[RMDB]
RNA sequence: GGGAACGACUCGAGUAGAGUCGAAAAGAAUGGAAAGGGAUUGUAGAGAUCAGUGAGGCCGGGCUUCUUCGCAGCAUUCUCAAUUAGAUUGUAUAUGGUUACGUGCGACAGAUACUGGUGCGAAGAAGGGUAAUAUAUUCUUCGGAAUAUAUUACCCAAAAGAAACAACAACAACAAC
Reactivity to DMS in 0.01 (KOAc 150mM, MgCl2 10mM, bicine 150mM(pH8.5), 24C), signal-to-noise 9, nucleotides 027 to 126: g010a090a060u010g000g000a020a040a050g010g000g000a080u020u010g010u010a060g010a100g010a050u010c040a070g000u010g010a100g010g010c060c040g010g010g000c070u000u000c010u000u000c010g000c020a050g010c030a050u010u010c040u000c080a070a100u040u030a110g000a170u010u010g010u000a040u010a070u020g010g010u010u020a060c090g010u010g010c050g010a050c080a070g000a060u010a040c080u000g010g000u010g000c010g000a020a040g000a060a080
Reactivity to 2A3 in 0.01 (KOAc 150mM, MgCl2 10mM, bicine 150mM(pH8.5), 24C), signal-to-noise 9, nucleotides 027 to 126: g020a030a040u120g020g050a060a040a060g050g010g020a040u040u090g050u100a040g020a020g000a100u070c050a030g040u020g060a040g050g000c030c010g010g010g000c020u030u010c000u010u010c010g000c010a020g020c000a050u190u020c040u010c040a040a160u130u100a070g100a190u070u090g070u070a070u020a040u170g170g030u100u080a050c050g030u060g050c020g030a010c020a030g020a010u020a060c030u050g080g040u030g030c010g010a020a010g020a020a030

Background
The record gives the reactivity of an RNA of 177 nucleotides to DMS and 2A3. For 2A3, 18,566 sequencing reads were counted.